An RNA of 177 nucleotides, treated with DMS and 2A3 and read out base by base. The data come from the RNA Mapping Database (RMDB), library OK2TST. Conditions: 150 mM KOAc, 10 mM MgCl2 and 150 mM bicine (pH 8.5), 24 C.
RNA sequence: GGGAACGACUCGAGUAGAGUCGAAAAUGAUGAUGGUACCCUCAUCUAUAGCCGGAGGGUUACCGUAAGUGAGAGAAGUAUCCAAAUCAAGCAAGUACAAUGUGCAGAAGAGUCUCAUAUCCAUCUGUAUAUUCGUAUCUUUCGAGAUACGAAUAUAAAAAGAAACAACAACAACAAC
Reactivity to DMS in 0.01 (KOAc 150mM, MgCl2 10mM, bicine 150mM(pH8.5), 24C), signal-to-noise 9, nucleotides 027 to 126: u000g010a080u010g020a090u010g010g010u000a040c010c010c010u000c000a090u010c140u010a110u010a120g020c140c170g010g010a030g010g000g020u000u000a010c010c010g020u010a050a080g020u000g010a060g000a070g010a060a080g010u000a060u000c050c060a050a070a070u000c090a090a090g010c050a030a070g010u000a070c130a080a060u000g000u000g000c050a060g000a060a080g000a090g000u000c030u000c040a060u000a090u010c070c040a060u000c040u000g000
Reactivity to 2A3 in 0.01 (KOAc 150mM, MgCl2 10mM, bicine 150mM(pH8.5), 24C), signal-to-noise 6, nucleotides 027 to 126: u150g030a040u030g010a020u090g010g000u010a020c000c020c000u000c010a130u010c050u130a220u130a150g160c090c080g080g000a000g030g020g000u020u060a010c000c010g010u020a060a050g030u040g020a010g000a000g020a140a020g040u060a070u030c040c030a040a010a080u090c050a050a010g060c010a050a000g020u030a050c050a070a090u130g030u030g050c010a010g030a120a010g030a040g070u000c000u010c030a030u050a050u090c030c020a040u040c030u060g060